The record gives the reactivity of an RNA of 177 nucleotides to 2A3 and DMS.
The RNA was probed in 150 mM KOAc, 10 mM MgCl2 and 150 mM bicine (pH 8.5) at 24 C.
As a SHAPE reagent, 2A3 marks flexible, mostly unpaired nucleotides at the ribose 2'-OH.
Source: RMDB library TTRDEL, as collected in RNAgym.
RNA sequence: GGGAACGACUCGAGUAGAGUCGAAAAGAUAUGGAACUCAAGCUCGAUAAGCUGGUCGGAAACGACGCAGCUUUUGACGAGCGACAGUUCCUAAGUCAAAAGAUACCGGCCUUCGGGCCGGUAUCAACAAUCUGAUACUCUUCGGAGUAUCAGAUUGAAAAGAAACAACAACAACAAC
Reactivity to 2A3 in 0.01 (KOAc 150mM, MgCl2 10mM, bicine 150mM(pH8.5), 24C), signal-to-noise 1, nucleotides 027 to 126: g000a000u060a020u080g000g000a000a010c010u010c040a080a000g010c000u000c020g220a250u010a210a000g000c000u010g010g000u000c000g000g000a060a020a020c030g000a000c060g070c300a010g000c000u000u010u030u050g060a030c000g000a000g010c000g020a000c000a000g000u000u000c010c000u010a050a000g030u000c020a110a060a010a200g000a010u010a010c010c030g010g020c000c020u100u250c300g020g000g000c000c000g010g000u000a000u000c000a010a000
Reactivity to DMS in 0.01 (KOAc 150mM, MgCl2 10mM, bicine 150mM(pH8.5), 24C), signal-to-noise 4, nucleotides 027 to 126: g000a000u000a300u010g010g000a000a010c010u000c020a030a300g000c000u000c000g020a170u000a030a000g030c000u000g010g000u000c000g010g010a060a070a110c000g010a010c000g030c000a000g010c000u010u000u010u010g020a130c100g000a010g020c000g000a190c300a010g000u000u000c000c000u000a000a100g000u000c020a080a100a150a140g000a010u000a010c000c020g020g030c000c010u000u020c190g020g020g030c000c000g010g000u000a000u000c000a080a190